[RMDB]
Background
The record gives the reactivity of an RNA of 177 nucleotides to 2A3 and DMS. 2A3 adducts were read by reverse transcription with SuperScript II with manganese. The reactions ran in a buffer of 150 mM KOAc, 10 mM MgCl2 and 150 mM bicine (pH 8.5), at 24 C. 2A3 is a SHAPE reagent: it acylates the 2'-hydroxyl of flexible nucleotides of all four kinds. For DMS the reverse transcriptase was MarathonRT.
RNA sequence: GGGAACGACUCGAGUAGAGUCGAAAAGGAUGCCAGUAAUUUGAUGAAUGAAGGUGAUGACAAAAACACAUUUAACUUCAUCAUGUGGAGUGAUUCCGCAGAGGAUGAGCGGGAUAACGCACUCAUCGGGUAUAUCCAGGUUCGCCUGGAUAUACCCAAAAGAAACAACAACAACAAC
Reactivity to 2A3 in 0.01 (KOAc 150mM, MgCl2 10mM, bicine 150mM(pH8.5), 24C), signal-to-noise 3, nucleotides 027 to 126: g040g040a070u140g030c020c060a060g090u190a150a290u040u110u120g010a000u010g010a050a040u030g020a090a040g060g040u050g040a200u050g050a010c120a090a160a000a010a000c040a040c000a020u070u020u100a170a120c040u010u000c000a020u000c000a020u080g020u070g140g020a070g000u030g020a030u000u070c000c000g000c030a040g040a050g300g000a070u180g120a040g000c020g000g000g010a030u070a070a050c090g000c020a000c010u010c010a100u170c090
Reactivity to DMS in 0.01 (KOAc 150mM, MgCl2 10mM, bicine 150mM(pH8.5), 24C), signal-to-noise 2, nucleotides 027 to 126: g000g000a060u000g010c000c000a130g010u000a090a050u000u020u020g050a000u020g000a020a000u050g000a130a080g030g040u020g010a120u000g000a160c170a060a050a140a160a110c060a020c000a000u000u000u000a080a180c190u020u000c000a020u000c010a010u000g000u050g000g000a010g000u000g000a030u000u000c020c000g020c070a070g000a200g000g000a050u040g000a050g050c000g000g030g000a070u000a120a040c170g000c030a080c030u000c030a030u000c120